RNA sequence: GGGAACGACUCGAGUAGAGUCGAAAAGCACUGUCUCGGAGAGAGGCUCGGUGAAAUAGACAUGUCUGUGAAGAUGCGGACUACCUGCACCUGGACAGAAAGACCCUAUGAAGCUUUACUGUUCCCUGGGAUUGGCUUUGGGCUUUUCCUGCGCAGCGACAACAUAAUUCUUCGGAAUUAUGUUGUCAAAAGAAACAACAACAACAAC
Reactivity to DMS in 0.01 (KOAc 150mM, MgCl2 10mM, bicine 150mM(pH8.5), 24C), signal-to-noise 4, nucleotides 027 to 156: g020c010a090c040u000g020u010c010u000c020g010g010a200g020a220g010a050g020g020c010u000c040g010g030u000g020a070a100a130u000a090g010a080c050a300u000g010u000c010u010g010u000g020a110a050g010a050u000g010c010g020g010a300c080u000a060c100c010u000g020c010a020c010c010u010g030g000a060c020a040g010a060a040a100g000a050c050c020c000u000a090u000g000a100a130g020c010u000u000u000a090c090u000g000u000u000c010c020c020u000g030g010g000a060u000u010g010g030c040u010u000u000g020g030g030c040u000u000u000u000c000c010u000g020c090g040c070a110g010c070
Reactivity to 2A3 in 0.01 (KOAc 150mM, MgCl2 10mM, bicine 150mM(pH8.5), 24C), signal-to-noise 9, nucleotides 027 to 156: g040c010a010c080u040g020u020c010u040c070g070g010a170g020a020g010a020g110g020c040u060c080g040g000u050g050a090a080a060u140a040g070a050c060a070u130g010u030c030u020g060u040g100a140a080g060a130u150g030c020g000g030a050c050u090a100c030c020u030g010c010a010c020c020u010g020g030a010c010a020g060a020a040a010g060a040c030c010c010u050a080u170g100a080a020g010c010u060u050u100a110c040u100g030u050u030c000c000c020u030g020g000g010a040u030u060g020g000c010u110u090u110g090g070g000c000u020u030u040u020c010c020u040g010c060g000c040a060g060c020